[RMDB]
RNA sequence: GGGAACGACUCGAGUAGAGUCGAAAACAAGUGUCAGAACAUGUGUAUUGAACCAUGUGAUUUGCCAAAUUAUGGCGAGACUGUCAAUUUGCCUCCAGGUCUUUUAGGUAAUGUAGUUAAGUACACAGUCAAGAAGGAGGUUCGCCUCCUUCUUGACAAAAGAAACAACAACAACAAC
Reactivity to DMS in 0.01 (KOAc 150mM, MgCl2 10mM, bicine 150mM(pH8.5), 24C), signal-to-noise 2, nucleotides 027 to 126: c050a060a040g010u010g010u000c040a100g000a190a050c030a090u000g010u000g030u000a220u000u030g010a110a070c020c030a020u020g000u000g000a130u010u000u010g040c000c030a000a130a080u010u040a060u000g020g060c020g010a030g010a110c070u000g000u010c120a090a090u020u000u010g010c030c010u010c030c060a170g010g000u020c040u000u000u010u010a050g040g000u000a050a070u000g000u000a040g020u000u000a020a080g030u010a020c080a030c110a140
Reactivity to 2A3 in 0.01 (KOAc 150mM, MgCl2 10mM, bicine 150mM(pH8.5), 24C), signal-to-noise 1, nucleotides 027 to 126: c020a060a040g030u000g040u110c030a000g080a150a050c040a010u060g060u020g000u040a100u180u240g020a030a030c010c020a040u110g110u030g080a170u030u060u100g020c030c040a050a090a160u300u150a200u050g030g000c060g000a010g040a000c030u030g000u130c000a130a160u000u060u090g000c020c000u000c030c050a050g230g000u090c010u030u140u040u120a040g070g000u030a060a030u090g000u020a050g030u070u020a080a000g010u030a020c050a010c000a000

Structure probing data (DMS and 2A3) for a 177-nucleotide construct. For 2A3 the reverse transcriptase was SuperScript II with manganese. The RNA was probed in 150 mM KOAc, 10 mM MgCl2 and 150 mM bicine (pH 8.5) at 24 C. For DMS the reverse transcriptase was MarathonRT. The data come from the RNA Mapping Database (RMDB), library OK2TRN.